The record gives the reactivity of an RNA of 207 nucleotides to DMS and 2A3. It was measured as part of the RMDB library M2RFPK. High DMS reactivity at an A or C suggests that its Watson-Crick edge is free. For DMS the reverse transcriptase was MarathonRT. For 2A3, 8,352 sequencing reads were counted. The RNA was probed in 150 mM KOAc, 10 mM MgCl2 and 150 mM bicine (pH 8.5) at 24 C.

[RMDB]
RNA sequence: GGGAACGACUCGAGUAGAGUCGAAAAGCCGAUGAAUUGCCGAGAAGCCUGGCUCGAAAUCGUCGACGCAUCGACGACGGUCCUGCCAUGAGACCGUAACGAGGACAUGUCGCCUCGAAAGGCGUCGUAUAACAUGAGUGGUUCGCCACUCAUGUAAGACGGAUUAAGUAUUCGUACUUAAUCCGUCAAAAGAAACAACAACAACAAC
Reactivity to DMS in 0.01 (KOAc 150mM, MgCl2 10mM, bicine 150mM(pH8.5), 24C), signal-to-noise 3, nucleotides 027 to 156: g010c010c030g000a110u010g000a090a100u000u010g030c050c020g010a130g020a080a080g020c070c050u000g030g060c010u000c020g020a030a080a060u000c030g030u000c000g030a070c100g020c090a180u000c000g000a060c010g000a010c000g000g000u010c000c000u000g050c040c230a120u000g010a080g010a020c000c020g000u010a080a110c060g010a080g030g010a100c050a110u000g000u000c050g010c000c000u010c040g000a060a090a080g010g010c020g010u000c020g030u000a110u000a100a080c000a020u010g010a020g020u000g000g010u000u010c300g020c020c000a020c000u000c010a000u000g000u000a050a140
Reactivity to 2A3 in 0.01 (KOAc 150mM, MgCl2 10mM, bicine 150mM(pH8.5), 24C), signal-to-noise 7, nucleotides 027 to 156: g050c010c030g020a030u070g050a060a200u130u110g030c050c030g030a050g050a130a020g030c020c060u060g060g000c020u040c070g050a070a060a040u060c040g000u020c000g010a020c040g010c110a080u070c020g030a030c010g010a000c000g010g000u000c000c020u070g140c050c030a130u140g020a040g010a150c010c000g000u020a030a010c030g000a020g010g020a020c010a080u200g040u150c050g010c010c010u020c020g010a080a040a000g050g020c010g000u020c010g010u070a080u040a180a010c000a000u000g000a000g000u010g010g010u040u060c120g030c060c000a000c000u000c000a000u000g000u000a020a010